An RNA of 177 nucleotides, treated with 2A3 and DMS and read out base by base.
For DMS the reverse transcriptase was MarathonRT.
RNA sequence: GGGAACGACUCGAGUAGAGUCGAAAAAACGAUAUAGGGCCGAUGAUGUGAACCAUGCUCCUACGGUCUAAACCUGUGGGGAGGAUUUCCAAACCAUAUUUCCCAAGAGCUGAGGCCUGACACCGGACUAUAUAAAAUGGUUCGCCAUUUUAUAUAGAAAAGAAACAACAACAACAAC
Reactivity to 2A3 in 0.01 (KOAc 150mM, MgCl2 10mM, bicine 150mM(pH8.5), 24C), signal-to-noise 1, nucleotides 027 to 126: a000a010c080g010a100u120a030u110a190g050g010g010c030c050g040a040u090g020a060u100g070u060g070a030a010c020c000a030u120g060c020u030c000c000u010a020c030g040g000u000c060u140a160a140a100c000c030u050g000u040g020g010g020g020a020g020g000a060u070u100u090c030c000a060a010a040c020c010a030u090a090u100u030u040c020c000c010a010a030g050a010g000c030u030g040a030g000g000c000c000u020g000a010c000a010c020c040g030g040a070
Reactivity to DMS in 0.01 (KOAc 150mM, MgCl2 10mM, bicine 150mM(pH8.5), 24C), signal-to-noise 4, nucleotides 027 to 126: a090a040c060g000a070u000a050u000a280g000g000g010c020c020g000a170u000g010a160u000g020u000g010a070a050c110c080a040u000g000c020u000c000c030u010a050c070g000g000u010c100u010a070a100a130c130c060u010g020u010g010g010g000g000a280g010g000a140u000u000u020c030c020a060a170a180c070c040a040u000a040u010u000u010c010c000c010a120a090g000a100g010c040u010g010a240g010g020c020c000u010g010a120c300a060c100c030g000g020a300

The data come from the RNA Mapping Database (RMDB), library RFMREP. For DMS, 2,681 sequencing reads were counted. For 2A3, 1,880 sequencing reads were counted. For 2A3 the reverse transcriptase was SuperScript II with manganese.